[RMDB]
Overview
The record gives the reactivity of an RNA of 207 nucleotides to 2A3. Reactivities are given for positions 27 through 156. 2A3 adducts were read by reverse transcription with SuperScript II with manganese. Reactivities are rounded to 0.1 and cut off at 0 and 3. The reactions ran in a buffer of 150 mM KOAc, 10 mM MgCl2 and 150 mM bicine (pH 8.5), at 24 C.
RNA sequence: GGGAACGACUCGAGUAGAGUCGAAAAGGCUGUUCUUCUUUCCCUUUCCUCGUCUUCUCUGGUCAACCUCUGGAGUUCCCCUUCCUCUUCCUUGCUGAGUGUCUUUCCUCCCGCGCUCAGCUGUUUCUUCUUGUUCUCGAGGGCCUUCCUUCUUCGGCUGAUAUCUCAUGUUCGCAUGAGAUAUCAGAAAAGAAACAACAACAACAAC
Reactivity to 2A3 in 0.01 (KOAc 150mM, MgCl2 10mM, bicine 150mM(pH8.5), 24C), signal-to-noise 1, nucleotides 027 to 156: g070g000c060u040g020u150u060c080u110u040c000u030u080u050c020c010c070u000u040u030c060c010u050c050g050u040c070u120u020c050u020c010u060g080g030u050c040a080a150c040c010u000c070u080g040g020a070g010u000u020c030c010c000c030u040u040c010c000u040c040u060u000c000c020u060u070g000c010u000g010a030g000u040g000u020c070u060u070u090c000c010u020c000c000c000g020c010g010c000u000c000a000g000c000u010g020u010u030u000c020u030u000c010u080u080g060u140u050c020u010c010g060a020g050g040g020c010c030u100u060c010c000u040u040c020u030u070c050g160g000